[RMDB]
RNA sequence: GGGAACGACUCGAGUAGAGUCGAAAAGGCUGUAGAGCUACCGGCAGGAAGUUAAGAUCAGAAGCGUAACCGAGCAGAUACUGAUGAACGCGCAGGUCAUCCGGCACGCUACCAUUUGCGCGGAUCCAUGCUCUGUCGUUUUCGAACGACAGAGCAUAAAAGAAACAACAACAACAAC
Reactivity to 2A3 in 0.01 (KOAc 150mM, MgCl2 10mM, bicine 150mM(pH8.5), 24C), signal-to-noise 1, nucleotides 027 to 126: g010g010c030u070g050u140a030g010a010g140c030u050a040c020c000g010g000c000a010g050g040a110a010g010u110u250a070a040g060a140u050c060a010g040a160a020g050c010g050u030a040a050c010c010g010a020g000c010a010g020a060u120a180c020u060g050a070u030g040a080a050c040g000c020g000c040a000g010g020u020c020a020u070c000c010g020g030c020a000c080g030c040u120a060c020c020a080u020u070u080g010c060g060c000g000g020a010u000c080c010
Reactivity to DMS in 0.01 (KOAc 150mM, MgCl2 10mM, bicine 150mM(pH8.5), 24C), signal-to-noise 2, nucleotides 027 to 126: g000g010c010u000g000u030a050g020a020g040c040u010a090c060c050g010g000c070a070g000g000a110a090g020u010u010a040a060g010a040u010c050a010g000a090a130g040c050g020u010a140a100c060c060g010a090g000c020a040g010a090u010a060c080u000g000a060u010g010a040a090c080g000c060g000c040a030g000g010u010c070a080u020c010c060g000g000c030a040c140g000c080u000a050c110c110a130u010u000u000g000c020g010c010g010g000a110u000c060c110